[RMDB]
Source: RMDB library OK1LIB, as collected in RNAgym. Chemical mapping of a 177-nucleotide RNA with DMS and 2A3. The RNA was probed in 150 mM KOAc, 10 mM MgCl2 and 150 mM bicine (pH 8.5) at 24 C. Values cover nucleotides 27 to 126. For 2A3, 790 sequencing reads were counted.
RNA sequence: GGGAACGACUCGAGUAGAGUCGAAAAACGAGACUGGGUUUGUGGCAUGAAGGCGAAGCUGGCGGAGCAGCAGUACGCAUCCCGCGCUGCCAGUUCGCUGCGGGAGAGCGUUGAACGUACGGCGGAAGCCACGUGGCCUAUUCGUAGGCCACGUGGCAAAAGAAACAACAACAACAAC
Reactivity to DMS in 0.01 (KOAc 150mM, MgCl2 10mM, bicine 150mM(pH8.5), 24C), signal-to-noise 1, nucleotides 027 to 126: a110c050g000a110g020a060c020u030g000g000g010u000u000u000g000u000g000g000c020a090u000g000a090a150g020g000c020g000a070a080g000c010u000g000g020c010g020g000a120g000c040a050g020c030a070g000u020a040c050g010c070a150u000c000c070c060g000c000g020c080u000g000c040c080a030g000u000u000c080g010c030u020g030c000g000g000g000a030g000a070g000c000g030u000u050g020a150a080c110g010u000a030c110g000g000c020g000g020a120a070
Reactivity to 2A3 in 0.01 (KOAc 150mM, MgCl2 10mM, bicine 150mM(pH8.5), 24C), signal-to-noise 2, nucleotides 027 to 126: a000c040g050a000g110a020c020u020g020g030g000u030u190u120g020u090g070g010c010a060u080g050a090a010g070g060c050g020a020a040g170c070u030g050g010c010g070g000a050g000c000a030g040c000a120g090u090a040c110g000c070a060u090c050c060c040g000c000g050c110u000g000c000c000a020g000u030u130c050g020c070u060g000c020g000g010g000a000g000a000g120c050g000u030u020g030a090a010c060g020u110a010c050g010g020c000g080g000a010a010